[RMDB]
Structure probing data (DMS and 2A3) for a 207-nucleotide construct. It was measured as part of the RMDB library M2RFPK.
RNA sequence: GGGAACGACUCGAGUAGAGUCGAAAAAAUGGCACUGCAGAGCUGAUGGGCCAUGUACCUAUCCAAAAUGAGAUCCCAUCUUGCACACUGUGCUAAUUUGAGAUUCUCAUGCCUCAUACUUGGAGAGACCGCAUGCCCAGCUUCGGCUGGGCAUGAAUGCUUUCUACUCAUUCGUGAGUAGAAAGCAAAAAGAAACAACAACAACAAC
Reactivity to DMS in 0.01 (KOAc 150mM, MgCl2 10mM, bicine 150mM(pH8.5), 24C), signal-to-noise 1, nucleotides 027 to 156: a100a000u000g010g030c010a110c070u000g030c040a120g000a170g030c060u000g030a120u010g000g040g000c010c010a060u010g080u000a130c040c010u000a090u000c030c060a060a090a100a090u010g000a090g030a080u000c010c020c000a060u000c030u000u000g040c060a080c010a170c230u000g040u000g010c000u010a030a040u000u010u000g000a120g000a080u000u000c030u000c020a050u000g000c000c050u010c030a090u000a100c110u000u000g000g010a150g030a180g000a200c090c110g000c020a030u000g000c000c010c000a050g010c020u010u000c280g040g000c010u010g010g000g000c020a000u000g010a040a090
Reactivity to 2A3 in 0.01 (KOAc 150mM, MgCl2 10mM, bicine 150mM(pH8.5), 24C), signal-to-noise 1, nucleotides 027 to 156: a000a010u030g000g010c040a000c060u060g000c080a070g020a050g110c060u060g020a080u030g010g010g000c030c010a020u020g050u020a110c030c000u060a100u090c040c030a060a050a020a020u080g020a040g010a040u050c000c010c000a000u000c000u060u130g020c010a020c000a010c120u160g000u020g000c000u030a050a100u010u010u070g040a030g040a080u120u040c010u000c000a030u030g040c020c040u100c000a080u080a150c050u060u090g000g060a010g000a020g060a040c060c110g030c000a000u000g010c000c010c000a010g000c000u020u020c140g070g000c020u000g040g000g030c000a000u010g000a000a000